The record gives the reactivity of an RNA of 207 nucleotides to DMS and 2A3.
The 2A3 profile rests on 1,430 reads.
2A3 adducts were read by reverse transcription with SuperScript II with manganese.
RNA sequence: GGGAACGACUCGAGUAGAGUCGAAAAGCAUCAUUCGUGAUGCAAAUGGCGUACUACGUCUUCAACAGCUACGAGGUGCCGAUAAGUCCCAAAUAGGACUUUUGACGGCGACUCGUAGACAUGAAGACGUAUCGCGAUACGGCGCGUUCGCGCGCAAUGCAAGUCCAAAAUUCGUUUUGGACUUGCAAAAAGAAACAACAACAACAAC
Reactivity to DMS in 0.01 (KOAc 150mM, MgCl2 10mM, bicine 150mM(pH8.5), 24C), signal-to-noise 1, nucleotides 027 to 156: g020c000a000u010c000a050u010u020c300g050u000g000a000u000g010c000a020a040a130u000g000g010c020g030u000a100c080u010a020c000g020u000c000u010u000c010a010a070c160a130g000c030u000a020c000g000a000g000g020u000g000c000c000g000a140u000a010a010g000u000c000c000c070a070a160a160u030a050g000g010a040c020u010u010u020u010g000a220c060g000g000c000g030a030c000u010c010g040u000a010g010a000c140a300u020g010a020a000g030a000c050g000u000a000u000c020g000c040g000a120u000a050c060g000g010c000g010c020g020u010u000c280g040c040g060c010g010c020a130a120
Reactivity to 2A3 in 0.01 (KOAc 150mM, MgCl2 10mM, bicine 150mM(pH8.5), 24C), signal-to-noise 2, nucleotides 027 to 156: g040c020a010u000c000a000u030u240c190g170u140g000a020u050g000c040a040a000a090u200g090g020c010g000u020a080c050u000a010c010g010u000c000u020u000c010a140a160c060a200g070c010u000a000c020g010a000g040g070u180g000c000c000g020a010u020a060a000g010u030c000c060c000a070a190a040u300a040g000g000a010c000u020u070u130u200g230a090c020g020g000c000g060a040c000u000c000g010u000a000g000a000c000a020u040g000a000a000g000a000c010g000u000a000u010c010g000c000g020a020u060a270c110g060g000c000g000c030g040u080u100c150g020c000g020c000g010c100a030a060